[RMDB]
RNA sequence: GGGAACGACUCGAGUAGAGUCGAAAAAGGGCCGCGGUGCUCUGGAGUAGAGGCUUCUUGCUUCGAAACACCAUCGAUCGUCCCUUCUUCUUUUACCUUCUCCUGGCUCUUCCGAUGAGACGCGACCGGUGGCAUCACCUCUCGGUUCGUCCAACCUCCCUGUUAUCAUGUUCGCAUGAUAACAGGGAAAAGAAACAACAACAACAAC
Reactivity to 2A3 in 0.01 (KOAc 150mM, MgCl2 10mM, bicine 150mM(pH8.5), 24C), signal-to-noise 3, nucleotides 027 to 156: a000g010g000g000c040c010g040c010g010g000u000g000c000u000c000u030g000g000a000g000u000a000g000a010g010g000c020u150u100c100u300u300g000c000u000u000c040g000a000a000a000c010a020c150c000a000u000c000g070a300u030c010g010u020c000c000c000u000u010c000u010u010c000u000u040u040u080a030c000c000u090u060c040u000c020c020u040g060g000c020u010c000u130u020c020c020g110a150u110g030a050g000a090c020g010c090g040a010c020c000g000g010u010g020g040c070a120u100c040a090c010c000u030c020u070c000g020g000u010u020c000g000u000c000c000a010a040c000c000u000
Chemical mapping of a 207-nucleotide RNA with 2A3. The reactions ran in a buffer of 150 mM KOAc, 10 mM MgCl2 and 150 mM bicine (pH 8.5), at 24 C. Source: RMDB library VIROID, as collected in RNAgym. For 2A3 the reverse transcriptase was SuperScript II with manganese.